RNA sequence: GGGAACGACUCGAGUAGAGUCGAAAAAUUUGGAAACUUUAUUUGUAAAGCGCUCUUUGAUCUCAAUGCUGUCUGGCUGGACAUUUGCCAAAGCCCAUGAACGCCCUACCAGACACUGUUGAGACAAGACAGCAGCAGUAUUCGUACUGCUGCUGUCAAAAGAAACAACAACAACAAC
Reactivity to 2A3 in 0.01 (KOAc 150mM, MgCl2 10mM, bicine 150mM(pH8.5), 24C), signal-to-noise 1, nucleotides 027 to 126: a000u080u110u030g070g030a160a130a000c020u000u230u030a100u190u240u220g130u260a080a050a020g090c080g080c090u040c000u000u130u170g100a300u120c000u010c000a000a000u010g000c000u000g000u000c000u000g020g000c030u000g000g000a010c000a160u000u090u210g140c030c060a050a030a020g000c000c000c010a070u180g130a010a030c070g000c000c000c000u000a060c000c000a000g000a000c000a000c000u030g050u000u000g000a000g030a000c010a000a000
Overview: This 177-nucleotide RNA was probed chemically with 2A3. The data come from the RNA Mapping Database (RMDB), library RFM100.